Chemical mapping of a 207-nucleotide RNA with DMS and 2A3.
The reactions ran in a buffer of 150 mM KOAc, 10 mM MgCl2 and 150 mM bicine (pH 8.5), at 24 C.
Reactivities are rounded to 0.1 and cut off at 0 and 3.
Source: RMDB library OK3TST, as collected in RNAgym.
RNA sequence: GGGAACGACUCGAGUAGAGUCGAAAAGUAUAGAAGCAUGAGACCGCAUGCGGUAUACGAUGAAUCACGGUCGAAUCCGUUGUGCGAAAGCACUUCGGUAAUGCAUAUCGGUAGACAGAUCUGCCCGGAUCAGCUACCGUAAUUAGUACGGGCAAGACGUAAUAGGCUGAUUCGUCAGCCUAUUACGAAAAGAAACAACAACAACAAC
Reactivity to DMS in 0.01 (KOAc 150mM, MgCl2 10mM, bicine 150mM(pH8.5), 24C), signal-to-noise 1, nucleotides 027 to 156: g030u000a140u000a070g030a250a180g000c010a010u000g060a300g010a020c020c040g040c000a030u000g000c030g010g040u000a130u000a110c100g000a150u000g000a180a110u000c080a080c040g030g010u000c000g000a120a200u010c000c000g050u020u030g000u000g010c000g000a090a190a300g020c010a010c000u000u000c020g000g000u000a000a030u000g000c020a130u010a140u000c030g000g030u000a040g020a150c090a080g000a030u000c000u010g030c000c020c000g000g000a110u030c020a180g000c020u000a000c010c020g020u020a020a040u000u000a120g000u000a030c030g000g070g020c020a070a110g000a210
Reactivity to 2A3 in 0.01 (KOAc 150mM, MgCl2 10mM, bicine 150mM(pH8.5), 24C), signal-to-noise 2, nucleotides 027 to 156: g080u060a060u050a180g110a200a010g010c000a000u010g010a010g000a070c000c000g070c020a010u100g150c030g030g000u100a090u040a090c100g030a050u130g130a080a160u150c070a040c070g000g030u030c040g010a010a020u010c000c000g010u000u000g000u000g000c020g050a080a020a010g000c000a000c000u010u010c000g020g000u030a040a020u110g030c020a040u060a040u200c010g010g010u010a000g060a120c120a060g000a000u000c010u030g020c000c000c010g000g000a000u000c010a000g020c000u010a010c000c000g010u000a000a040u050u120a050g110u020a020c010g000g000g000c040a030a020g080a030